[RMDB]
Chemical mapping of a 177-nucleotide RNA with DMS and 2A3. 2A3 adducts were read by reverse transcription with SuperScript II with manganese. The 2A3 profile rests on 1,294 reads. The RNA was probed in 150 mM KOAc, 10 mM MgCl2 and 150 mM bicine (pH 8.5) at 24 C. The DMS profile rests on 1,413 reads.
RNA sequence: GGGAACGACUCGAGUAGAGUCGAAAAGAGAGAGCUUACCUGGGUUCCCUGGCAGCGCUGCAACGGAAUCCAGUGCCCACCGGAGCGCCAGUUCGUGCGAGAGCCGCUUCGGCUUCUUCUUCGCGGAGCACUGUUCUAAGUUCGCUUAGAACAGUGCAAAAGAAACAACAACAACAAC
Reactivity to DMS in 0.01 (KOAc 150mM, MgCl2 10mM, bicine 150mM(pH8.5), 24C), signal-to-noise 2, nucleotides 027 to 126: g000a170g020a080g020a090g000c050u010u010a050c180c010u000g000g000g000u010u000c000c000c070u010g020g010c040a070g040c300g010c210u000g020c020a020a040c300g000g010a060a040u000c000c010a010g030u020g010c000c000c000a220c040c050g020g000a040g010c030g020c210c060a090g000u000u000c070g000u020g000c160g020a120g000a070g020c070c020g020c070u010u000c040g020g000c040u000u000c050u000u010c090u000u010c080g000c110g000g000a210
Reactivity to 2A3 in 0.01 (KOAc 150mM, MgCl2 10mM, bicine 150mM(pH8.5), 24C), signal-to-noise 1, nucleotides 027 to 126: g040a000g020a000g010a010g000c070u120u080a090c030c000u000g030g020g000u000u020c000c000c030u030g090g000c050a070g060c190g080c300u080g030c030a030a050c030g020g020a020a010u040c020c000a020g000u060g010c010c000c010a010c010c030g010g010a010g020c040g030c000c040a080g000u020u080c040g030u090g070c030g050a090g010a000g040c010c030g020c040u060u040c040g010g000c000u100u040c000u040u020c020u030u070c050g060c070g120g060a050